RNA sequence: GGGAACGACUCGAGUAGAGUCGAAAACAAUACAAAUGUUACAGAUUAAACAUUCCACAUCAAACGAAGUAACAUCUAACAUCAAGAGAAAGGGGAUAGGAAAAUGGGUUAAUGAAACAGUCCAAGGGGAGCAAUGUGGACAAAAAGAAUCUCCUGAGUGCUAUAUGGGUUUCGACCCAUAUAGCACAAAAGAAACAACAACAACAAC
Reactivity to 2A3 in 0.01 (KOAc 150mM, MgCl2 10mM, bicine 150mM(pH8.5), 24C), signal-to-noise 2, nucleotides 027 to 156: c010a000a050u120a060c010a040a150a020u040g000u050u040a020c000a010g180a120u140u140a130a110a000c060a050u210u190c130c020a050c040a090u130c130a230a170a060c080g040a170a000g040u060a040a000c000a040u000c000u050a020a060c000a080u140c160a110a000g060a000g040a070a040a040g050g000g000g000a010u040a040g110g070a030a000a060a020u060g000g040g000u010u050a000a010u110g100a050a020a020c020a030g020u000c000c000a030a060g020g020g040g000a040g020c030a000a070u040g000u040g060g010a040c050a000a080a000a010a000g090a070a070u080c060u070c130c000u000g020a010